RNA sequence: GGGAACGACUCGAGUAGAGUCGAAAAAAGAGGCACUCGCCGCGACUUCCUCUUAUCGAGAGGUAAACAAGGAGCGAGUUUAAAGGCUAGUCAGCUCAGCUGGCAACACCGUCAAAUUGCGGGAACAUCCUAAGAGCUAUCGACCACCAAGCAGGCUACCUUAUAAGUACUUCGGUACUUAUAAGGUAAAAGAAACAACAACAACAAC
Reactivity to DMS in 0.01 (KOAc 150mM, MgCl2 10mM, bicine 150mM(pH8.5), 24C), signal-to-noise 2, nucleotides 027 to 156: a090a100g010a050g030g010c050a110c050u000c010g050c050c000g000c040g010a280c060u000u000c010c000u000c020u000u000a140u010c130g010a100g020a120g000g040u000a040a090a200c070a060a090g010g000a080g010c040g000a070g030u000u000u000a020a050a050g010g020c020u020a300g010u000c030a030g010c010u020c100a180g000c040u010g040g020c010a050a110c110a070c010c020g000u010c090a040a060a090u000u000g010c010g030g000g030a110a060c080a050u000c030c020u010a060a130g020a080g000c050u010a050u020c020g020a100c030c040a110c010c010a020a110g010c090a070g000g010c030u010
Reactivity to 2A3 in 0.01 (KOAc 150mM, MgCl2 10mM, bicine 150mM(pH8.5), 24C), signal-to-noise 8, nucleotides 027 to 156: a000a010g110a040g010g000c030a010c020u020c030g010c020c000g070c010g060a040c030u100u060c030c000u010c010u060u130a190u300c170g050a020g000a000g030g010u090a060a070a060c060a070a050g070g010a080g030c020g010a020g000u020u030u050a040a040a000g030g000c020u020a020g030u040c030a000g000c030u040c200a020g010c030u030g000g010c010a050a010c020a030c050c010g020u030c030a040a150a210u140u180g010c020g010g010g010a040a020c030a090u070c000c020u080a120a020g020a010g040c010u040a040u130c040g050a040c000c030a020c030c010a060a020g030c030a010g090g010c020u010
An RNA of 207 nucleotides, treated with DMS and 2A3 and read out base by base. Conditions: 150 mM KOAc, 10 mM MgCl2 and 150 mM bicine (pH 8.5), 24 C. Source: RMDB library ARCHII, as collected in RNAgym. For DMS, 3,666 sequencing reads were counted. For 2A3 the reverse transcriptase was SuperScript II with manganese. Values cover nucleotides 27 to 156.